The data come from the RNA Mapping Database (RMDB), library M2RFPK.
Chemical mapping of a 207-nucleotide RNA with DMS and 2A3.
For DMS the reverse transcriptase was MarathonRT.
The RNA was probed in 150 mM KOAc, 10 mM MgCl2 and 150 mM bicine (pH 8.5) at 24 C.

RNA sequence: GGGAACGACUCGAGUAGAGUCGAAAAAUCGCGCCUGGUCGGAACAUAACGACGGCGGGCCGGUGGGGAAUCAGGGCGCUACCGUGGGAUAGCGAUGAGACAGCCCCUCCGAUGGCACCAAGCGUCGCACACUGGCCAUACUUCGGUAUGGCCAGAAUCCAUUUUACUAUUUCGAUAGUAAAAUGGAAAAAGAAACAACAACAACAAC
Reactivity to DMS in 0.01 (KOAc 150mM, MgCl2 10mM, bicine 150mM(pH8.5), 24C), signal-to-noise 2, nucleotides 027 to 156: a060u000c030g030c080g020c000c000u000g010g030u000c030g000g020a080a200c050a120u000a100a070c010g010a050c000g060g030c070g000g000g020c040c030g050g010u000g000g010g110g000a300a150u010c030a070g020g010g000c000g030c000u010a010c010c030g000u020g010g020g020a060u000a020g010c030g010a020u010g000a300g010a040c030a110g030c000c000c020c010u000c030c020g000a140u000g000g000c010a130c020c020a070a080g000c020g020u000c010g000c040a090c110a180c010u000g000g000c020c000a010u010a010c010u010u010c290g050g020u010a020u010g030g030c000c000a010g000a020a050
Reactivity to 2A3 in 0.01 (KOAc 150mM, MgCl2 10mM, bicine 150mM(pH8.5), 24C), signal-to-noise 3, nucleotides 027 to 156: a000u050c020g000c000g000c000c010u100g040g010u040c030g030g030a170a110c040a180u160a180a000c020g030a000c020g040g060c020g000g010g010c020c010g000g000u030g000g000g020g010a010a010u030c020a040g050g050g040c000g000c000u010a010c010c050g150u160g060g060g030a130u010a000g000c000g010a020u050g010a010g010a030c030a050g020c000c020c000c000u010c000c010g080a100u100g010g000c030a060c250c010a090a030g100c010g010u030c000g010c000a060c010a020c070u000g000g000c010c000a010u010a000c010u030u030c060g070g000u000a000u000g000g000c000c000a000g000a000a000